[RMDB]
RNA sequence: GGGAACGACUCGAGUAGAGUCGAAAAUUAAUGAGGACCAAAUGGCUGUAAAGCCCGUAAUGCUCGAAAUGGUCGUAAACAGCCAAAUCGGGCAAAUCGAGCAAUCCCAACGACAGCGACAAAACAAGAGAUAGAAGUAUUUCGAUACUUCUAUCUCAAAAGAAACAACAACAACAAC
Reactivity to DMS in 0.01 (KOAc 150mM, MgCl2 10mM, bicine 150mM(pH8.5), 24C), signal-to-noise 6, nucleotides 027 to 126: u000u000a080a060u000g010a120g000g000a110c080c060a060a130a100u010g010g010c010u000g000u010a070a140a140g000c010c000c040g010u000a070a220u000g020c000u000c010g000a010a020a300u000g000g000u010c070g010u010a050a080a110c220a200g000c010c000a010a030a230u000c010g010g000g000c010a010a040a070u000c010g010a020g000c020a120a130u000c010c010c010a060a070c140g000a040c020a010g010c010g000a070c140a070a040a050a080c180a080a090
Reactivity to 2A3 in 0.01 (KOAc 150mM, MgCl2 10mM, bicine 150mM(pH8.5), 24C), signal-to-noise 4, nucleotides 027 to 126: u120u080a030a120u140g060a070g070g060a010c000c020a020a030a160u130g070g000c000u020g010u090a130a110a080g010c070c000c000g010u010a100a050u050g000c000u000c010g000a000a010a010u000g010g010u010c010g010u020a070a100a050c030a020g000c010c000a000a010a020u000c000g000g000g000c010a030a000a010u080c000g000a000g000c000a020a120u020c010c000c000a010a010c040g070a010c000a000g020c010g050a060c100a040a130a020a000c050a120a050
Structure probing data (DMS and 2A3) for a 177-nucleotide construct. The data come from the RNA Mapping Database (RMDB), library M2PK90. Reactivities are rounded to 0.1 and cut off at 0 and 3. For 2A3 the reverse transcriptase was SuperScript II with manganese. The RNA was probed in 150 mM KOAc, 10 mM MgCl2 and 150 mM bicine (pH 8.5) at 24 C.